[RMDB]
RNA sequence: GGGAACGACUCGAGUAGAGUCGAAAAGCGUACUACUCGAGGUUUACGUAGUUACCACCGAAGAACAGGCUCCCAAAUAGGAGCCUGGGAGGUGGUAGGUUCGAAGUAAACUACCCACCGAGUAUCGCAAAGCUCCGUCUGUUCGCAGACGGAGCAAACAAUAAGAAAAGUUCGCUUUUCUUAUUGUAAAAGAAACAACAACAACAAC
Reactivity to DMS in 0.01 (KOAc 150mM, MgCl2 10mM, bicine 150mM(pH8.5), 24C), signal-to-noise 1, nucleotides 027 to 156: g010c040g020u000a110c100u000a030c010u000c000g000a080g010g000u000u010u020a000c040g020u000a190g010u000u000a000c010c000a020c030c010g000a100a250g050a190a140c040a030g000g020c000u000c000c000c020a030a150a240u010a080g010g010a020g020c020c000u010g010g000g010a100g000g040u010g020g010u000a000g000g020u000u000c030g000a080a280g010u000a040a040a000c000u000a050c020c020c050a300c080c030g010a080g000u000a030u000c010g000c020a100a060a150g010c000u000c000c000g040u010c000u000g030u010u010c300g030c010a030g000a040c000g000g020a010g030c000a000a040
Reactivity to 2A3 in 0.01 (KOAc 150mM, MgCl2 10mM, bicine 150mM(pH8.5), 24C), signal-to-noise 2, nucleotides 027 to 156: g000c010g010u080a070c030u000a000c000u010c000g010a010g000g030u000u000u000a000c000g000u000a030g100u010u010a010c000c000a000c000c000g160a230a060g010a070a010c000a000g010g000c000u020c020c040c030a160a210a040u210a090g000g000a000g000c020c010u020g000g010g000a020g020g000u000g000g000u000a000g010g110u070u130c020g050a100a010g010u010a000a030a000c010u050a050c040c030c000a020c010c020g000a020g020u010a040u300c000g040c050a090a080a010g000c000u000c020c000g030u010c010u040g080u030u140c300g040c110a000g000a010c000g000g000a000g010c000a000a010
Overview: Source: RMDB library RNAMAK, as collected in RNAgym. Structure probing data (DMS and 2A3) for a 207-nucleotide construct. The reactions ran in a buffer of 150 mM KOAc, 10 mM MgCl2 and 150 mM bicine (pH 8.5), at 24 C.